[RMDB]
RNA sequence: GGGAACGACUCGAGUAGAGUCGAAAAGAUAUGGAUGUAAGGAGCCGAUAAGCUGGUAUCGGAAACGAUACCCAGCUUUUGACGGCUUCUUACAUCCUAAGUCAAAAGCAGUUCUUCGGAACUGCAAUCCAACUACUAAGUUCGCUUAGUAGUUGGAAAAAGAAACAACAACAACAAC
Reactivity to DMS in 0.01 (KOAc 150mM, MgCl2 10mM, bicine 150mM(pH8.5), 24C), signal-to-noise 5, nucleotides 027 to 126: g000a020u000a150u020g000g000a020u000g000u000a010a010g000g010a010g020c000c010g040a290u010a000a040g000c000u000g000g010u000a000u000c000g010g000a040a020a060c000g000a010u000a000c280c090c060a000g010c000u010u000u010u010g010a090c240g020g010c000u000u010c000u000u000a010c000a000u000c000c000u000a000a050g000u000c010a120a110a150a170g010c000a010g010u000u000c000u000u020c260g020g000a010a010c000u000g010c010a040a040
Reactivity to 2A3 in 0.01 (KOAc 150mM, MgCl2 10mM, bicine 150mM(pH8.5), 24C), signal-to-noise 1, nucleotides 027 to 126: g010a000u010a000u060g000g010a000u010g000u020a050a000g040g020a000g010c080c300g300a240u230a300a000g000c020u000g010g020u010a000u000c000g000g000a020a000a010c000g000a000u010a010c000c030c020a000g000c020u020u030u030u030g020a020c030g000g000c000u010u020c000u030u010a010c010a010u030c010c000u000a020a000g000u010c010a000a030a000a000g020c000a000g010u020u000c030u020u100c300g160g020a000a010c000u010g000c000a000a000